[RMDB]
An RNA of 207 nucleotides, treated with 2A3 and DMS and read out base by base. Source: RMDB library OK3TST, as collected in RNAgym. For 2A3 the reverse transcriptase was SuperScript II with manganese. Conditions: 150 mM KOAc, 10 mM MgCl2 and 150 mM bicine (pH 8.5), 24 C.

RNA sequence: GGGAACGACUCGAGUAGAGUCGAAAAAAUCUAUAACACGGUAUUCAGCGCAAGGCAUAUGAAGGAGCUUGAGGCGCUCAAUGAUGUCCUCCAGACAACUCAGCGCGCGGAUACGGCAAAUAUAGUGACACAGACGGGUCAGGCAUUGGCUAAUCCGAAUGGGAAAGUAUUUCGAUACUUUCCCAUUAAAAGAAACAACAACAACAAC
Reactivity to 2A3 in 0.01 (KOAc 150mM, MgCl2 10mM, bicine 150mM(pH8.5), 24C), signal-to-noise 3, nucleotides 027 to 156: a000a000u120c110u050a140u020a030a020c030a000c060g080g000u020a030u030u020c060a080g000c010g000c030a060a150g140g000c030a090u070a120u300g050a080a030g080g010a080g010c000u000u010g010a010g030g010c020g010c060u010c030a120a270u250g040a090u050g040u150c000c000u000c000c000a020g020a060c010a060a120c040u040c050a030g020c010g000c000g010c020g030g000a020u020a000c030g020g000c020a010a090a000u070a000u010a020g040u030g080a020c050a010c010a110g080a070c030g010g020g040u030c050a080g020g040c040a040u070u140g080g020c010u030a010a030u010c030c000g000
Reactivity to DMS in 0.01 (KOAc 150mM, MgCl2 10mM, bicine 150mM(pH8.5), 24C), signal-to-noise 2, nucleotides 027 to 156: a060a060u000c010u000a060u000a050a140c210a060c040g010g000u000a010u000u000c010a150g010c010g050c010a230a100g030g010c090a190u000a160u000g010a060a040g000g000a100g010c040u000u000g010a060g010g050c140g000c080u010c030a020a040u020g020a090u010g000u010c010c000u000c020c000a070g000a110c060a040a030c020u000c030a240g020c040g020c000g060c060g070g020a030u000a030c020g010g020c030a020a100a150u000a070u000a020g000u010g010a160c040a100c080a060g000a140c060g010g000g020u000c010a030g010g000c040a120u010u020g000g000c020u000a060a060u010c020c010g010